[RMDB]
RNA sequence: GGGAACGACUCGAGUAGAGUCGAAAAGAUAUGGAAUACUUCGAUAAGCGAUAUGUCGGAAACGACAUAUCGCUUUUGACGAAGUUCCUAAGUCAAACCCCAUGUGGUCUUCGGACCACAUGGGGAACAGUGUGAUCAUGUUCGCAUGAUCACACUGAAAAGAAACAACAACAACAAC
Reactivity to DMS in 0.01 (KOAc 150mM, MgCl2 10mM, bicine 150mM(pH8.5), 24C), signal-to-noise 2, nucleotides 027 to 126: g000a030u000a300u010g000g000a060a110u010a060c000u010u000c000g010a190u010a060a010g010c000g000a010u000a000u000g010u000c000g000g010a110a100a130c000g020a030c000a000u000a010u000c000g020c000u000u000u000u000g000a190c120g010a010a010g010u000u000c010c000u000a030a130g000u010c050a110a080a110c000c010c000c000a010u000g000u000g000g000u000c000u000u010c220g030g000a020c000c000a000c000a000u010g000g000g010g010a000a000